[RMDB]
Source: RMDB library M2RFPK, as collected in RNAgym. Chemical mapping of a 207-nucleotide RNA with 2A3 and DMS. For DMS, 2,546 sequencing reads were counted. For DMS the reverse transcriptase was MarathonRT. The reactions ran in a buffer of 150 mM KOAc, 10 mM MgCl2 and 150 mM bicine (pH 8.5), at 24 C.
RNA sequence: GGGAACGACUCGAGUAGAGUCGAAAAUGGUAGUCCGCCACUCUAAGGGGACUCCUUUAGAAGAAGAGGCUAGGUGGUAUUCCGGUGUGGGAUACUUGGUAAUAUGUAACGCUAAUUGCAUAAGAUUAAAACUUUGCAUACUUCGGUAUGCAAAGAAUCAUUACGCAACCUUCGGGUUGCGUAAUGAAAAAGAAACAACAACAACAAC
Reactivity to 2A3 in 0.01 (KOAc 150mM, MgCl2 10mM, bicine 150mM(pH8.5), 24C), signal-to-noise 2, nucleotides 027 to 156: u090g020g030u030a040g010u000c010c040g040c140c020a040c030u100c010u070a080a090g010g010g020g030a080c030u090c000c000u020u040u040a080g000a140a010g000a020a000g020a020g010g050c040u100a060g020g020u050g080g000u040a030u140u040c060c050g110g100u160g030u130g060g020g010a020u020a060c010u020u060g040g010u090a110a050u020a070u110g010u010a050a010c030g000c120u050a070a130u040u080g020c000a020u040a090a060g020a110u150u160a030a040a060a090c000u010u000u000g000c000a000u000a000c000u010u030c070g100g000u000a000u000g000c020a000a000a000g000a000a020
Reactivity to DMS in 0.01 (KOAc 150mM, MgCl2 10mM, bicine 150mM(pH8.5), 24C), signal-to-noise 1, nucleotides 027 to 156: u000g000g030u000a000g040u000c010c020g000c010c010a210c070u040c070u020a040a070g030g020g040g000a120c230u000c000c010u000u000u000a080g020a050a100g000a140a010g020a200g020g030c050u000a030g010g000u010g010g010u000a050u000u000c000c000g040g050u020g040u030g020g030g000a090u000a010c010u010u000g000g020u000a100a120u010a050u000g020u000a070a110c130g020c120u010a060a160u010u000g000c030a070u000a070a150g000a170u000u000a060a080a190a150c000u000u000u000g000c000a010u010a010c000u000u010c290g050g000u000a000u000g010c000a000a000a000g020a040a100